[RMDB]
RNA sequence: GGGAACGACUCGAGUAGAGUCGAAAAGAUAUGGACACGCAUAUCUCCAUCGAUCUAGUUCGGAAACGAACUAGGGAGGAGUAUGAACUACGUGUCCUAAGUCAAAAGCCGAAGGUUCGCCUUCGGCGCACUCCGUAAGGUUCGCCUUACGGAGUGCAAAAGAAACAACAACAACAAC
Reactivity to DMS in 0.01 (KOAc 150mM, MgCl2 10mM, bicine 150mM(pH8.5), 24C), signal-to-noise 4, nucleotides 027 to 126: g000a070u000a300u010g000g030a000c020a030c000g030c000a030u000a040u010c010u000c000c010a300u020c270g010a090u020c000u000a000g000u000u010c000g030g000a160a040a300c020g020a010a010c000u000a000g000g010g010a020g030g000a040g030u000a020u000g010a160a090c170u000a220c020g010u000g000u010c000c010u010a030a070g010u000c030a130a110a100a230g010c000c000g000a010a000g010g010u000u010c250g010c010c000u000u000c000g030g010c000
Reactivity to 2A3 in 0.01 (KOAc 150mM, MgCl2 10mM, bicine 150mM(pH8.5), 24C), signal-to-noise 4, nucleotides 027 to 126: g020a020u060a030u170g000g010a000c010a000c010g030c000a030u020a220u260c020u000c020c000a300u300c030g030a010u020c010u000a000g000u010u010c000g000g050a060a060a060c000g000a000a000c010u000a010g000g000g000a010g020g000a000g000u030a010u020g080a150a160c160u210a060c300g020u000g000u000c000c000u020a110a010g060u040c040a050a040a240a080g000c010c000g010a000a000g070g000u060u220c300g230c030c000u000u000c020g030g000c020

This 177-nucleotide RNA was probed chemically with DMS and 2A3. It was measured as part of the RMDB library TTRDES. For 2A3, 9,841 sequencing reads were counted. The RNA was probed in 150 mM KOAc, 10 mM MgCl2 and 150 mM bicine (pH 8.5) at 24 C.